[RMDB]
RNA sequence: GGGAACGACUCGAGUAGAGUCGAAAAAUCAUCUGAAGAUCAGCUAUUAGAAGAGAAAGAUCAGUUACGUCCUUUGGACCUGAUCAGCUUGAUACAAGAACUACUGAUUUCAACUUCUUUGGCUUAAAAAAGGCCACAGAGUUCGCUCUGUGGCCAACAAAAUAUAUGUCUUCGGACAUAUAUUUUGAAAAGAAACAACAACAACAAC
Reactivity to 2A3 in 0.01 (KOAc 150mM, MgCl2 10mM, bicine 150mM(pH8.5), 24C), signal-to-noise 3, nucleotides 027 to 156: a020u080c040a020u030c070u170g110a150a040g030a150u080c040a000g010c010u050a130u280u120a190g010a030a000g010a000g030a030a100a010g030a010u000c000a010g020u040u050a050c040g000u020c020c010u110u110u270g010g010a020c030c030u030g020a030u030c020a010g070c020u060u110g010a020u070a150c020a050a020g010a070a040c030u080a010c020u080g020a080u010u020u050c050a080a060c010u010u030c000u020u010u020g000g000c000u030u040a110a030a030a010a000a060g000g000c010c000a000c000a000g010a000g010u040u060c070g030c090u000c000u010g000u000g000g000c000c010a000a000
Reactivity to DMS in 0.01 (KOAc 150mM, MgCl2 10mM, bicine 150mM(pH8.5), 24C), signal-to-noise 2, nucleotides 027 to 156: a100u010c060a060u000c050u010g010a090a150g010a180u000c130a030g000c000u000a040u010u000a040g000a060a030g000a100g000a150a190a030g010a000u000c000a030g000u010u000a050c130g010u000c000c000u000u020u000g020g000a050c050c000u010g010a160u000c080a140g000c110u010u000g010a100u000a080c050a030a120g000a010a000c030u000a080c000u010g000a050u000u000u010c000a090a190c020u000u000c000u000u020u020g000g000c000u000u000a000a020a070a140a140a140g010g010c000c000a020c020a010g000a090g050u000u000c300g010c010u000c010u000g040u000g000g040c010c000a000a010
This 207-nucleotide RNA was probed chemically with 2A3 and DMS.
Reactivities are given for positions 27 through 156.